[RMDB]
RNA sequence: GGGAACGACUCGAGUAGAGUCGAAAACUCUUGCACAGAAUCACCUUUCUAUAAUAACCAGUGCAAGAAGGGUUAUUAUACCAUUUAAUGUGCCGAGGCCACGCGGAGUACGAUGGAGGGUACAGCAAAAACGUGAAGUACUUCGGUACUUCACGAACCAACCGAUGAGGUUCGCCUCAUCGGUUGGAAAAGAAACAACAACAACAAC
Reactivity to 2A3 in 0.01 (KOAc 150mM, MgCl2 10mM, bicine 150mM(pH8.5), 24C), signal-to-noise 1, nucleotides 027 to 156: c000u030c000u000u000g000c010a040c010a020g110a130a120u120c010a130c020c000u170u300u170c140u080a040u000a020a020u000a020a020c010c010a000g000u000g000c000a000a000g000a010a040g010g000g000u000u010a000u010u000a020u010a050c000c040a180u090u120u300a130a070u150g000u040g060c000c030g010a070g020g000c040c000a020c010g020c040g090g010a090g040u130a060c020g050a090u080g060g010a030g070g020g000u000a040c000a000g020c000a000a050a050a050a020c010g010u010g020a000a000g000u010a000c000u050u040c130g080g000u000a000c000u000u000c000a010c000g000a000a010